[RMDB]
RNA sequence: GGGAACGACUCGAGUAGAGUCGAAAACCGGUGUUGUUUUUUGGCAGUCGCGCUGCGCUAACGCAACCGCUCCUGCUACAGCAGAAAACAGCUCUCACCCAUGGAGGUUUAACCGGUAAAAGGAGAUAAGCCACAUAGCAUUCGUGCUAUGUGGCUUAAAAGAAACAACAACAACAAC
Reactivity to DMS in 0.01 (KOAc 150mM, MgCl2 10mM, bicine 150mM(pH8.5), 24C), signal-to-noise 1, nucleotides 027 to 126: c000c000g000g000u000g000u000u000g000u000u000u030u000u000u000g000g050c070a000g000u020c120g010c080g000c080u000g000c050g030c300u000a100a110c050g000c000a080a060c260c060g000c000u000c110c000u030g010c000u000a050c190a190g000c060a040g010a070a000a060a050c040a000g000c000u000c030u000c090a050c070c010c000a090u070g000g000a040g020g000u010u000u060a150a110c000c000g000g060u000a030a280a200a080g000g000a110g000a110u030
Reactivity to 2A3 in 0.01 (KOAc 150mM, MgCl2 10mM, bicine 150mM(pH8.5), 24C), signal-to-noise 1, nucleotides 027 to 126: c000c000g000g050u100g010u000u000g020u000u000u010u020u000u000g010g000c000a000g000u000c000g000c020g050c020u000g050c000g090c300u080a130a090c100g000c000a000a100c020c020g030c030u000c010c020u000g040c070u030a050c070a050g210c010a000g000a000a000a000a000c010a000g000c000u000c000u020c020a020c000c080c060a070u180g180g000a110g000g040u030u070u080a050a030c000c000g000g000u010a030a150a000a020g230g070a050g030a140u050
An RNA of 177 nucleotides, treated with DMS and 2A3 and read out base by base. Source: RMDB library RFM100, as collected in RNAgym.